[RMDB]
RNA sequence: GGGAACGACUCGAGUAGAGUCGAAAAUCGCGCAUCGAAUCAAGGGAAGCGUGCCGGUGCAGGCAAGAGACCACCGUAAGCGUCGAUGCAACUAGAUAAGCGCCGAUUCACAUCAGCGCGACUACGCUCUCGCUGCCUAAGCGACGGCUAGUCUGUCGAUGGUAGGUAUGUUCGCAUACCUACCAUCAAAAGAAACAACAACAACAAC
Reactivity to DMS in 0.01 (KOAc 150mM, MgCl2 10mM, bicine 150mM(pH8.5), 24C), signal-to-noise 2, nucleotides 027 to 156: u000c040g030c130g100c010a050u000c050g000a040a090u000c120a170a170g000g010g010a070a070g060c010g010u000g010c060c000g050g020u000g000c140a130g010g010c010a090a060g000a130g000a170c020c000a110c110c040g020u020a090a100g010c110g000u000c030g000a070u010g020c000a080a180c080u030a060g000a120u000a070a160g000c010g020c020c010g010a140u000u000c170a110c040a300u000c000a050g000c020g020c000g020a020c020u000a010c070g000c020u000c090u000c010g010c010u000g000c100c100u040a140a050g030c000g000a010c160g030g010c010u010a030g000u000c000u000g020u000c090
Reactivity to 2A3 in 0.01 (KOAc 150mM, MgCl2 10mM, bicine 150mM(pH8.5), 24C), signal-to-noise 5, nucleotides 027 to 156: u120c010g000c020g000c040a020u040c080g120a130a070u140c100a160a110g110g050g050a050a050g040c020g010u040g050c060c000g040g020u050g020c060a040g030g000c010a010a010g040a000g020a040c000c020a000c000c010g120u170a040a010g010c020g020u000c000g010a000u000g000c000a010a030c020u110a030g100a270u130a250a040g000c000g000c000c010g040a000u120u170c120a060c010a150u010c020a020g000c000g000c020g000a000c000u020a000c100g000c000u020c000u000c020g010c020u050g070c040c130u140a100a000g000c000g000a010c010g010g000c000u010a000g000u000c020u050g100u110c120
This 207-nucleotide RNA was probed chemically with DMS and 2A3. For 2A3, 3,757 sequencing reads were counted. For DMS, 2,972 sequencing reads were counted. 2A3 adducts were read by reverse transcription with SuperScript II with manganese. The reactions ran in a buffer of 150 mM KOAc, 10 mM MgCl2 and 150 mM bicine (pH 8.5), at 24 C.